[RMDB]
RNA sequence: GGGAACGACUCGAGUAGAGUCGAAAAAGGGCUACGCGGGCGCGAUUCAGCAAGGUUGCGAACGCUCGAGACACGAUCGAGGGGUUCGGGCACGACAUGGACGUCGUCGGGCUCACCUACGGGCAAUUCUCGCUGCUGGAUCUGCUGAUGGCCGCGCGAACUAAGUACCCUUCGGGGUACUUAGUUCAAAAGAAACAACAACAACAAC
Reactivity to 2A3 in 0.01 (KOAc 150mM, MgCl2 10mM, bicine 150mM(pH8.5), 24C), signal-to-noise 1, nucleotides 027 to 156: a010g120g010g020c060u130a010c010g000c000g030g020g030c040g010c010g050a000u020u000c010a000g010c040a040a060g030g000u080u100g090c020g040a110a000c060g070c030u000c020g010a040g010a000c100a040c220g090a230u030c000g000a020g000g050g000g010u000u060c070g050g000g020c050a000c030g050a030c040a110u240g220g050a080c110g130u240c020g010u010c000g000g000g000c010u020c000a020c010c020u060a040c080g010g040g000c000a000a110u270u080c030u010c090g040c050u020g000c000u000g000g000a020u010c100u170g040c010u000g040a050u100g060g000c000c000g010c000g000c000